[RMDB]
RNA sequence: GGGAACGACUCGAGUAGAGUCGAAAACUCCUCUUCCUUUUCGGCCAGCGCCUUUUGAAGAUCGAGGAUUUCGACGUCCAGCUGCGAAGCCUUGUCCACCAGGUUCAGCAGUCGAUGGCCGAUGUCGACCCACAGAUGAGUUCGCUCAUCUGUGGGUAAAAGAAACAACAACAACAAC
Reactivity to 2A3 in 0.01 (KOAc 150mM, MgCl2 10mM, bicine 150mM(pH8.5), 24C), signal-to-noise 2, nucleotides 027 to 126: c020u030c000c030u050c000u030u050c050c000u010u030u050u120c060g020g030c030c010a080g020c020g030c080c000u030u100u080u180g070a040a000g040a050u130c080g020a030g010g060a060u070u000u050c040g020a010c020g000u040c030c000a030g000c040u020g020c020g020a050a000g050c000c040u060u050g090u000c020c050a110c050c010a070g040g060u060u030c040a000g000c020a000g000u020c030g040a050u040g010g000c000c000g020a030u110g020u020c010g050
Reactivity to DMS in 0.01 (KOAc 150mM, MgCl2 10mM, bicine 150mM(pH8.5), 24C), signal-to-noise 2, nucleotides 027 to 126: c080u000c020c010u000c040u000u000c020c070u000u000u000u000c110g000g000c020c050a120g020c110g000c050c040u000u000u000u000g000a060a050g010a040u000c070g000a070g020g020a090u000u000u000c030g020a090c060g000u000c040c030a130g030c080u000g020c040g000a150a210g010c000c000u000u010g010u000c080c080a110c100c110a110g010g010u010u000c080a260g000c010a030g010u020c070g020a070u000g000g000c030c020g000a030u000g020u000c050g000
Chemical mapping of a 177-nucleotide RNA with 2A3 and DMS. Values cover nucleotides 27 to 126. DMS adducts were read by reverse transcription with MarathonRT.